[RMDB]
RNA sequence: GGGAACGACUCGAGUAGAGUCGAAAAGAGAAAUGAAGUUUUACAGGGUUGGUGGCGAUGCGCAACAACGAUUGAGAUGUGAAACAGCACUCAUAACAAGCAUUUUCAAGCCCAAAAGAAUGAUACAACUGAUGUUAACGUUCGCGUUAACAUCAGUAAAAGAAACAACAACAACAAC
Reactivity to DMS in 0.01 (KOAc 150mM, MgCl2 10mM, bicine 150mM(pH8.5), 24C), signal-to-noise 3, nucleotides 027 to 126: g010a160g000a060a040a040u000g010a100a140g020u000u010u000u020a130c170a150g010g000g000u010u000g000g040u000g010g020c050g000a110u000g010c080g000c070a020a030c050a030a040c050g010a130u010u010g010a060g010a080u000g030u000g030a060a090a020c190a190g000c020a050c010u000c030a030u030a040a070c100a040a090g020c010a030u000u000u020u000c050a060a080g000c010c000c000a040a030a070a140g010a040a050u000g000a120u000a050c300a090
Reactivity to 2A3 in 0.01 (KOAc 150mM, MgCl2 10mM, bicine 150mM(pH8.5), 24C), signal-to-noise 2, nucleotides 027 to 126: g080a030g000a010a050a000u080g010a080a030g020u030u010u100u050a090c030a080g110g010g040u040u100g020g120u050g050g040c040g110a210u170g010c080g020c020a010a080c000a030a000c050g040a030u040u090g030a060g050a190u030g020u010g040a130a090a020c030a020g070c000a010c010u020c000a000u050a040a010c010a050a050g070c010a020u000u010u020u020c030a040a060g000c000c000c000a040a170a010a010g110a070a030u100g050a010u020a230c110a070
Structure probing data (DMS and 2A3) for a 177-nucleotide construct. DMS adducts were read by reverse transcription with MarathonRT. For DMS, 1,832 sequencing reads were counted.